[RMDB]
RNA sequence: GGGAACGACUCGAGUAGAGUCGAAAAUGUAUGUGUUGAUGUGUGUGUACAUGUACAUGUGUGAAUAUGAUAUACAUAUACAUACACGCACACAUAAGACACAUAUGAAAAGCCCGGUUCGCCGGGCGAUAUUGCAUGCCUUCGGGCAUGCAAUAUCAAAAGAAACAACAACAACAAC
Reactivity to 2A3 in 0.01 (KOAc 150mM, MgCl2 10mM, bicine 150mM(pH8.5), 24C), signal-to-noise 2, nucleotides 027 to 126: u130g000u010a000u000g020u000g020u000u050g060a090u040g000u000g000u000g000u000g000u000a050c010a110u020g000u010a010c000a040u010g010u010g030u010g050a180a070u260a210u300g100a040u050a020u010a300c010a010u010a000u010a050c020a010u010a000c050a020c090g010c000a000c000a010c000a000u020a030a070g010a010c000a010c010a010u000a000u010g030a080a150a040a010g000c000c030c080g000g020u050u040c140g000c050c020g040g000g010c000
Reactivity to DMS in 0.01 (KOAc 150mM, MgCl2 10mM, bicine 150mM(pH8.5), 24C), signal-to-noise 1, nucleotides 027 to 126: u000g010u010a000u010g010u000g020u000u000g020a060u010g010u000g050u000g010u000g040u000a110c130a030u010g020u000a030c030a020u000g000u000g000u000g050a110a150u000a130u000g010a210u000a040u000a000c000a000u000a030u010a000c000a000u000a130c110a030c000g030c000a010c000a030c000a010u000a080a120g000a010c010a020c000a000u020a010u000g000a070a170a140a220g010c000c000c000g030g000u020u000c170g000c010c000g040g000g030c040